[RMDB]
RNA sequence: GGGAACGACUCGAGUAGAGUCGAAAAAGCACGGUGUGAAACCCGUAGCGUACCUAUCACUUGCCACGGUCGGCAAGCACCAGACGGACCUGUACAGUCUCGCGGAGGAGAAGGGACUCCUCGGUCCACCUAUUACAACUUUCGAGUUGUAAUAGGUAAAAGAAACAACAACAACAAC
Reactivity to 2A3 in 0.01 (KOAc 150mM, MgCl2 10mM, bicine 150mM(pH8.5), 24C), signal-to-noise 9, nucleotides 027 to 126: a010g010c010a010c010g000g010u030g000u020g060a070a030a030c020c010c010g010u050a070g000c010g030u050a070c010c000u060a110u200c070a040c070u010u020g010c020c010a140c160g300g060u210c090g040g010c010a010a000g010c020a040c030c020a020g080a110c070g020g000a010c000c010u060g040u140a070c020a050g040u020c040u050c090g070c070g080g070a090g050g050a060g040a080a160g060g020g030a040c000u020c010c010u020c030g010g010u010c010c000
Reactivity to DMS in 0.01 (KOAc 150mM, MgCl2 10mM, bicine 150mM(pH8.5), 24C), signal-to-noise 9, nucleotides 027 to 126: a180g020c020a020c010g000g000u000g010u010g010a110a140a160c300c000c000g010u000a090g030c020g010u000a130c010c010u000a080u010c140a140c020u000u000g010c010c020a080c210g010g000u010c150g000g000c010a020a020g010c130a070c110c100a080g000a110c130g000g000a040c020c010u010g010u000a090c170a080g000u000c020u000c060g010c110g000g010a040g000g000a050g010a110a140g000g000g010a110c010u000c030c040u000c100g010g010u000c040c040